The record gives the reactivity of an RNA of 177 nucleotides to 2A3 and DMS.
The reactions ran in a buffer of 150 mM KOAc, 10 mM MgCl2 and 150 mM bicine (pH 8.5), at 24 C.
DMS adducts were read by reverse transcription with MarathonRT.
Reactivities are given for positions 27 through 126.
2A3 adducts were read by reverse transcription with SuperScript II with manganese.
For 2A3, 2,420 sequencing reads were counted.
[RMDB]
RNA sequence: GGGAACGACUCGAGUAGAGUCGAAAAGCCAUGAGUUUCGACUCAUGGCAAAAGCGCGUCAGCGCUACGAUGCAAGCGCAAGCGCGUCCAUCGUAAUUGACAAAAUUCUCGGGUUCGCCCGAGAAAAGCUACCAUGCAUGUUCGCAUGCAUGGUAGCAAAAGAAACAACAACAACAAC
Reactivity to 2A3 in 0.01 (KOAc 150mM, MgCl2 10mM, bicine 150mM(pH8.5), 24C), signal-to-noise 2, nucleotides 027 to 126: g000c010c000a000u010g000a020g010u060u060u240c180g020a020c000u000c000a000u000g000g000c000a000a030a000a000g000c010g000c010g080u080c060a080g030c000g000c020u010a000c030g130a080u130g060c170a070a030g000c000g000c030a080a040g080c020g010c000g040u020c020c000a080u080c010g080u100a080a110u120u150g050a030c060a010a050a020a180u070u000c000u010c000g010g000g000u030u030c200g080c020c000c000g000a000g010a010a020a000a000
Reactivity to DMS in 0.01 (KOAc 150mM, MgCl2 10mM, bicine 150mM(pH8.5), 24C), signal-to-noise 1, nucleotides 027 to 126: g030c000c000a020u010g020a020g000u000u000u030c170g100a070c020u000c000a000u000g000g000c020a000a010a050a100g030c000g030c010g060u000c070a290g030c000g000c000u000a010c020g000a080u030g020c070a230a060g000c030g030c040a110a300g020c070g000c040g040u030c110c030a100u000c030g010u000a210a080u010u030g000a020c180a100a060a070a140u010u010c000u000c000g000g000g000u000u010c250g030c000c000c000g000a010g020a030a000a000a080